[RMDB]
RNA sequence: GGGAACGACUCGAGUAGAGUCGAAAAUUGUAUUUUUUCAUAUGUUCCUCCUAUUUAAAACCUGCAUUAGUGCUCUUAAACUAGUGUUAUUGUGGGCCGGUACUAUUACUUUGAACAAAUAAGAGUGCAUGGUACAAAUGUUCGCAUUUGUACCAUGAAAAGAAACAACAACAACAAC
Reactivity to 2A3 in 0.01 (KOAc 150mM, MgCl2 10mM, bicine 150mM(pH8.5), 24C), signal-to-noise 2, nucleotides 027 to 126: u040u090g070u040a120u020u030u040u000u020u070c030a030u280a090u270g010u030u010c000c010u030c020c010u210a250u130u200u120a060a080a030a040c000c000u020g000c010a000u010u010a020g000u000g000c000u030c020u070u170a090a070a030c030u000a020g010u010g020u020u000a090u030u050g020u050g000g000g000c000c030g110g000u030a060c040u050a060u190u010a040c010u080u080u120g040a070a010c040a050a090a090u060a080a020g100a010g060u030g020
Reactivity to DMS in 0.01 (KOAc 150mM, MgCl2 10mM, bicine 150mM(pH8.5), 24C), signal-to-noise 2, nucleotides 027 to 126: u000u020g000u000a010u000u000u000u000u000u000c010a130u010a080u000g020u000u010c150c000u000c160c040u000a100u010u010u000a050a040a130a100c060c050u000g000c010a020u000u000a010g000u000g000c050u000c110u010u000a040a090a120c150u000a020g010u000g010u000u000a020u000u000g040u010g000g010g010c120c090g030g020u000a020c130u010a040u000u000a040c060u000u000u000g000a090a140c150a030a050a030u000a020a040g000a050g000u000g000
Conditions: 150 mM KOAc, 10 mM MgCl2 and 150 mM bicine (pH 8.5), 24 C. The record gives the reactivity of an RNA of 177 nucleotides to 2A3 and DMS. For 2A3, 1,513 sequencing reads were counted. Values cover nucleotides 27 to 126. DMS adducts were read by reverse transcription with MarathonRT. The DMS profile rests on 1,552 reads.